An RNA of 170 nucleotides, treated with DMS and 2A3 and read out base by base. For 2A3, 32,267 sequencing reads were counted. In probing experiments dimethyl sulfate is read out at A N1 and C N3, which are open when not base-paired. The DMS profile rests on 20,709 reads. For DMS the reverse transcriptase was MarathonRT. Source: RMDB library 15KLIB, as collected in RNAgym.
RNA sequence: GGGAACGACUCGAGUAGAGUCGAAAAGCUGGGGACGAAGCCGCCCCCGGGCGCUCCCCUCGAUACGCCUUCGAGGGGGUUCACACCUCCAGUCGGCGGGCCGGCUACUCUUCUUUCCCUUCUCUCGACCCCCCUGAGUUCGCUCAGGGGAAAAGAAACAACAACAACAAC
Reactivity to DMS in 0.01 (KOAc 150mM, MgCl2 10mM, bicine 150mM(pH8.5), 24C), signal-to-noise 5, nucleotides 027 to 129: g060c080u040g000g000g000g000a060c090g040a110a130g030c060c010g020c000c000c000c000c000g060g020g020c070g020c090u000c000c000c000c000u020c020g000a040u060a090c010g060c230c020u000u000c000g000a080g030g060g030g030g040u040u040c030a160c140a090c080c040u060c040c060a000g030u050c030g020g030c180g000g000g000c140c050g000g000c040u040a110c200u000c020u000u000c000u010u040u020c020c010c020u040u040c060u030c050u030c040g040a280c010c070
Reactivity to 2A3 in 0.01 (KOAc 150mM, MgCl2 10mM, bicine 150mM(pH8.5), 24C), signal-to-noise 9, nucleotides 027 to 129: g070c080u060g000g000g000g020a020c050g070a080a000g010c030c010g000c000c000c000c000c000g020g010g000c050g040c020u110c000c000c000c000u000c000g020a020u070a130c160g130c090c090u030u010c000g000a040g000g000g000g000g000u140u110c040a050c010a030c030c040u070c040c010a050g090u060c020g000g010c090g030g010g010c150c040g030g000c000u030a080c020u020c000u050u030c000u010u040u020c010c000c000u080u030c040u000c010u020c010g060a050c010c010